[RMDB]
RNA sequence: GGGAACGACUCGAGUAGAGUCGAAAAACUGGAUUUGCUGGUCAGCCUCUUACAGCAAAAAGAAGCUUAAUGAAGAUUUUAGAUGGAUUUGGGGCAACUUUCCUGUUAGGGAUCACCUGGUCAACCACCAUGACUCAAAGUUCGCUUUGAGUCAUGGAAAAGAAACAACAACAACAAC
Reactivity to 2A3 in 0.01 (KOAc 150mM, MgCl2 10mM, bicine 150mM(pH8.5), 24C), signal-to-noise 1, nucleotides 027 to 126: a010c020u030g040g000a110u050u070u110g000c040u000g010g010u030c030a030g030c010c000u000c020u020u020a050c010a000g000c000a050a050a010a000a050g040a040a010g000c050u120u150a070a060u300g100a080a100g030a150u000u110u050u160a120g030a100u130g100g000a050u050u010u080g020g000g000g000c000a010a030c060u040u040u010c000c000u030g070u110u070a060g030g000g020a020u060c010a040c090c020u030g000g020u030c010a020a020c070c000a020
Reactivity to DMS in 0.01 (KOAc 150mM, MgCl2 10mM, bicine 150mM(pH8.5), 24C), signal-to-noise 2, nucleotides 027 to 126: a130c060u020g020g010a150u000u000u000g020c010u000g000g000u000c070a060g000c030c010u000c040u000u010a050c050a020g020c020a020a040a090a110a080g020a060a180g000c020u000u000a060a120u000g020a130a100g000a080u000u000u000u000a110g000a090u010g020g000a060u000u000u010g020g010g020g030c070a020a120c070u000u000u000c020c010u010g000u000u000a080g010g000g000a070u000c080a030c080c020u000g010g000u000c050a050a090c070c090a170

The record gives the reactivity of an RNA of 177 nucleotides to 2A3 and DMS.
For DMS the reverse transcriptase was MarathonRT.
The data come from the RNA Mapping Database (RMDB), library OK2TRN.
The 2A3 profile rests on 1,195 reads.
The DMS profile rests on 1,435 reads.